An RNA of 177 nucleotides, treated with 2A3 and DMS and read out base by base. The 2A3 profile rests on 1,661 reads.

RNA sequence: GGGAACGACUCGAGUAGAGUCGAAAAGACCGUUAGUUCGCUAACGGUCAAAUAAUAUCAGCGGUAACGAGGCGUAAAAUAUUACCGCUGAACGCCUCGUUAAAAACAGGAGCUUCGGCUCCUGUAACUCUCCUAUUGGGUUCGCCCAAUAGGAGAGAAAAGAAACAACAACAACAAC
Reactivity to 2A3 in 0.01 (KOAc 150mM, MgCl2 10mM, bicine 150mM(pH8.5), 24C), signal-to-noise 2, nucleotides 027 to 126: g020a000c030c000g000u010u020a030g000u030u040c220g020c110u000a000a000c000g000g000u010c010a000a000a000u000a000a020u050a070u080c020a020g140c010g120g000u020a000a020c020g000a020g020g000c020g050u070a030a140a130a050u190a090u080u140a070c040c040g000c060u000g040a000a010c000g000c010c020u040c020g020u010u100a050a090a030a010a000c000a000g010g010a000g000c020u030u060c160g060g000c000u000c010c000u000g000u000a000a010
Reactivity to DMS in 0.01 (KOAc 150mM, MgCl2 10mM, bicine 150mM(pH8.5), 24C), signal-to-noise 2, nucleotides 027 to 126: g000a010c000c000g010u000u000a020g010u000u030c180g040c000u000a010a010c000g000g000u000c000a000a040a060u000a060a090u010a090u000c090a060g020c090g010g030u000a020a020c040g030a030g000g000c010g020u000a090a040a130a090u010a130u020u010a060c030c030g000c090u000g000a040a010c050g020c000c040u010c020g030u010u000a020a120a030a180a020c030a010g000g000a020g000c000u000u000c240g020g000c000u010c010c000u000g000u000a030a110